[RMDB]
RNA sequence: GGGAACGACUCGAGUAGAGUCGAAAAGGGUGGAGGGGGCGGCAUCACUGAGCUCUCGGCGCCAUGGUGGCAGUAUGAGCUAUGGCGGCAGUGGAGAGCAGGCAGCCGACCUGCCCGGACUCCAGCCAGAAACAUAUGACUUCGGUCAUAUGUUUCUAAAAGAAACAACAACAACAAC
Reactivity to 2A3 in 0.01 (KOAc 150mM, MgCl2 10mM, bicine 150mM(pH8.5), 24C), signal-to-noise 5, nucleotides 027 to 126: g030g020g050u040g020g060a080g070g050g000g020g000c000g000g000c010a040u090c020a040c030u020g030a030g010c000u000c000u010c010g040g030c010g010c020c000a010u010g010g030u080g060g080c100a090g120u280a160u280g100a030g010c000u000a000u000g020g000c000g070g020c030a040g110u170g210g000a000g000a000g010c000a000g090g030c020a000g020c040c030g030a090c010c010u060g040c000c010c000g000g010a020c010u000c000c000a030g050c000c020
Reactivity to DMS in 0.01 (KOAc 150mM, MgCl2 10mM, bicine 150mM(pH8.5), 24C), signal-to-noise 4, nucleotides 027 to 126: g000g000g010u000g000g010a040g020g010g000g000g020c000g000g000c050a040u030c110a160c020u000g010a080g030c000u010c000u020c050g000g030c000g020c000c010a010u020g000g000u000g000g040c090a210g000u040a060u020g020a300g000c010u000a010u000g000g000c020g010g010c020a050g000u050g020g000a010g000a010g030c000a060g000g000c180a030g020c020c040g000a130c300c000u000g000c000c000c010g030g000a160c020u020c000c000a020g010c060c020